An RNA of 177 nucleotides, treated with DMS and 2A3 and read out base by base.
RNA sequence: GGGAACGACUCGAGUAGAGUCGAAAAACAGUCAAAUGGAGAAGGGCCAACCUCUCAAUCUGACACAAUACAUGAACAGCAAAAUUGCUAUAUAAGUGGCUUAAAUUAGCAUGGGUAUUCCUAGUUCACUUGAGCCAGUUUUCGAACUGGCUCAAGUAAAAGAAACAACAACAACAAC
Reactivity to DMS in 0.01 (KOAc 150mM, MgCl2 10mM, bicine 150mM(pH8.5), 24C), signal-to-noise 1, nucleotides 027 to 126: a120c300a130g030u000c060a020a070a040u020g000g010a000g000a050a050g000g000g000c180c180a000a230c020c060u000c000u000c000a080a000u060c010u000g000a010c010a020c150a020a040u010a180c200a070u020g000a110a120c070a020g000c040a010a070a090a050u000u000g020c000u000a000u000a080u000a050a050g000u000g000g000c000u010u010a010a080a110u000u040a230g000c010a000u020g020g000g010u010a090u000u000c000c000u000a080g000u000u000c180
Reactivity to 2A3 in 0.01 (KOAc 150mM, MgCl2 10mM, bicine 150mM(pH8.5), 24C), signal-to-noise 2, nucleotides 027 to 126: a010c030a040g000u000c020a000a000a080u050g030g010a020g000a110a250g020g020g000c090c040a090a070c030c020u000c000u000c000a020a040u050c020u010g020a000c000a000c000a010a110u060a070c070a060u130g030a100a020c000a050g090c040a010a100a080a030u110u060g010c000u000a000u000a010u030a220a000g140u020g030g000c000u060u170a090a010a000u070u000a020g000c010a010u010g010g000g080u090a160u040u030c010c010u000a050g050u120u090c010

The RNA was probed in 150 mM KOAc, 10 mM MgCl2 and 150 mM bicine (pH 8.5) at 24 C. Source: RMDB library OK1LIB, as collected in RNAgym. The DMS profile rests on 1,207 reads. 2A3 adducts were read by reverse transcription with SuperScript II with manganese.